RNA sequence: GGGAACGACUCGAGUAGAGUCGAAAAGUAUAGCAUGACUGGCAAUGCGUAUACGAUGAAUCAGCCAGGAAAGAAUCCGUUGUGCGAAAGCACUUCGGUAAUGCAUAAUCGGUUCGAGUACAGCCCGAUACGAGAACCGUUGUUAGUACGGGCGAGAGAUAGUAAUCCCUUUCGAGGGAUUACUAUCAAAAGAAACAACAACAACAAC
Reactivity to DMS in 0.01 (KOAc 150mM, MgCl2 10mM, bicine 150mM(pH8.5), 24C), signal-to-noise 3, nucleotides 027 to 156: g030u000a040u000a140g020c010a040u000g000a180c000u000g000g000c020a180a060u000g020c010g040u000a070u000a090c110g020a170u020g000a120a110u010c080a150g030c000c000a010g000g020a130a110a130g020a290a180u000c020c000g040u000u000g000u000g010c010g010a180a130a300g020c010a010c010u000u000c000g030g030u000a000a030u010g000c080a170u000a120a100u000c040g020g030u000u000c000g000a300g010u000a030c020a030g010c000c000c000g000a210u000a010c030g000a300g000a030a010c010c000g000u000u000g000u000u010a060g020u010a090c070g020g000g010c030g000a130g010a170
Reactivity to 2A3 in 0.01 (KOAc 150mM, MgCl2 10mM, bicine 150mM(pH8.5), 24C), signal-to-noise 3, nucleotides 027 to 156: g070u060a030u070a090g000c030a010u020g070a090c010u010g000g000c040a060a040u020g000c050g050u020a010u030a100c070g090a130u220g090a020a140u150c050a090g060c010c010a010g030g040a050a120a000g060a010a040u040c000c000g010u020u000g000u000g000c020g030a020a030a010g020c000a000c000u000u000c010g000g000u030a010a020u090g020c050a090u090a130a140u290c080g000g000u020u000c020g000a010g000u000a030c020a040g010c000c000c000g020a020u000a020c020g020a010g010a070a020c000c000g000u000u040g020u040u080a080g030u020a050c020g030g000g000c040g010a040g000a010
The record gives the reactivity of an RNA of 207 nucleotides to DMS and 2A3. Conditions: 150 mM KOAc, 10 mM MgCl2 and 150 mM bicine (pH 8.5), 24 C. For 2A3 the reverse transcriptase was SuperScript II with manganese. For 2A3, 1,816 sequencing reads were counted.